[RMDB]
RNA sequence: GGGAACGACUCGAGUAGAGUCGAAAAGAGGACCUGCACUUCAUCCGUGGCUCGGGCGUCGACCCGCUACCCAAGGGCCUGCGCAACUGGGCGCCGGCUGGGCACAUCAUCGCUGCGCCGGCCGGCGAUGUUGUACGCCUUUCGAGGCGUACAACAUAAAAGAAACAACAACAACAAC
Reactivity to DMS in 0.01 (KOAc 150mM, MgCl2 10mM, bicine 150mM(pH8.5), 24C), signal-to-noise 2, nucleotides 027 to 126: g000a110g020g010a060c060c010u000g030c080a090c020u000u000c090a110u000c060c070g070u010g000g010c030u010c020g020g000g000c050g030u000c110g020a120c010c020c020g000c140u000a080c020c030c020a120a190g000g000g010c000c030u000g020c070g010c060a050a080c110u010g000g010g000c010g020c000c000g000g020c010u010g030g030g030c030a010c010a080u010c130a080u020c210g040c240u000g000c030g030c000c000g010g000c020c030g000g010c000g000
Reactivity to 2A3 in 0.01 (KOAc 150mM, MgCl2 10mM, bicine 150mM(pH8.5), 24C), signal-to-noise 1, nucleotides 027 to 126: g080a040g050g050a050c010c080u050g000c110a050c100u060u020c060a050u070c030c050g080u080g000g050c050u040c040g030g030g000c010g040u040c010g030a110c010c000c000g060c040u100a080c020c020c020a040a050g040g030g000c010c070u100g000c000g000c010a010a180c050u090g000g030g090c000g010c000c010g010g000c020u010g000g020g020c010a020c000a020u140c020a020u140c020g160c230u050g040c140g230c000c020g010g020c000c030g020g010c000g000
This 177-nucleotide RNA was probed chemically with DMS and 2A3. The DMS profile rests on 1,671 reads. The reactions ran in a buffer of 150 mM KOAc, 10 mM MgCl2 and 150 mM bicine (pH 8.5), at 24 C. 2A3 adducts were read by reverse transcription with SuperScript II with manganese. The 2A3 profile rests on 1,218 reads.